[RMDB]
RNA sequence: GGGAACGACUCGAGUAGAGUCGAAAAGAUAUGGACCUUGGGAGCUCUCACAUCGGAAACGAUGUACGCGAGAGCGACGAUCAAGUGUCCUAAGUCAAAGAUUUUGGAGGUUCGCCUCCAAAAUCAACUCCUCUUAGAUCUUCGGAUCUAAGAGGAGAAAAGAAACAACAACAACAAC
Reactivity to 2A3 in 0.01 (KOAc 150mM, MgCl2 10mM, bicine 150mM(pH8.5), 24C), signal-to-noise 2, nucleotides 027 to 126: g010a000u080a040u130g000g000a010c000c000u000u010g030g000g020a030g020c000u010c000u000c000a030c010a000u020c000g010g030a090a070a060c010g010a000u010g060u100a060c300g050c140g120a010g000a000g000c020g000a010c000g000a000u040c000a000a020g040u060g000u300c000c010u010a070a020g060u010c060a120a090a140g000a000u010u000u010u030g000g000a020g040g000u090u120c210g150c060c000u000c000c020a030a000a000a000u000c010a000a020
Reactivity to DMS in 0.01 (KOAc 150mM, MgCl2 10mM, bicine 150mM(pH8.5), 24C), signal-to-noise 3, nucleotides 027 to 126: g010a010u010a300u010g010g000a020c010c000u000u010g010g000g000a060g010c000u000c000u000c000a060c000a000u000c010g020g000a130a070a200c000g010a010u000g010u000a050c260g040c270g000a020g000a000g000c000g000a040c200g000a020u020c010a010a010g000u020g020u000c000c000u000a010a100g000u000c030a090a160a120g000a020u000u000u000u000g000g010a030g000g010u000u010c230g010c020c000u000c010c000a000a010a010a000u000c000a070a160

Conditions: 150 mM KOAc, 10 mM MgCl2 and 150 mM bicine (pH 8.5), 24 C.
Chemical mapping of a 177-nucleotide RNA with 2A3 and DMS.
The data come from the RNA Mapping Database (RMDB), library TTRDEL.
For 2A3 the reverse transcriptase was SuperScript II with manganese.
Values cover nucleotides 27 to 126.